[RMDB]
RNA sequence: GGGAACGACUCGAGUAGAGUCGAAAAUCAUUGGUGUUUUGACAGCCAUCUGCUCAGACCUUUAUUUCUCUGUUCAGCCAUAACUAAAAUUGAACAUUUUUCAAAUGUUCCAGGUAGUUUCAAUUUUAAGAUAACAGAAAACUAGUAUUCAAUGGUAGUAUGACGAUGAUUUCGAUCAUCGUCAUACAAAAGAAACAACAACAACAAC
Reactivity to 2A3 in 0.01 (KOAc 150mM, MgCl2 10mM, bicine 150mM(pH8.5), 24C), signal-to-noise 2, nucleotides 027 to 156: u090c020a020u010u100g010g000u010g050u070u020u030u090g020a000c020a010g020c020c050a030u030c030u090g000c070u000c040a020g010a080c000c020u110u060u040a120u020u100u060c100u000c040u030g080u020u100c020a020g030c010c070a100u130a120a020c020u130a070a160a070a150u110u110g010a010a000c010a010u010u050u030u100u250c010a020a010a020u040g040u040u010c040c020a050g170g000u060a010g040u050u050u080c020a020a030u070u000u050u220a080a040g010a040u080a140a050c020a050g020a010a070a020a020c010u010a040g070u100a180u090u160c030a030a050u030g010g010u030a050
About this RNA: Structure probing data (2A3) for a 207-nucleotide construct. It was measured as part of the RMDB library OK3TST.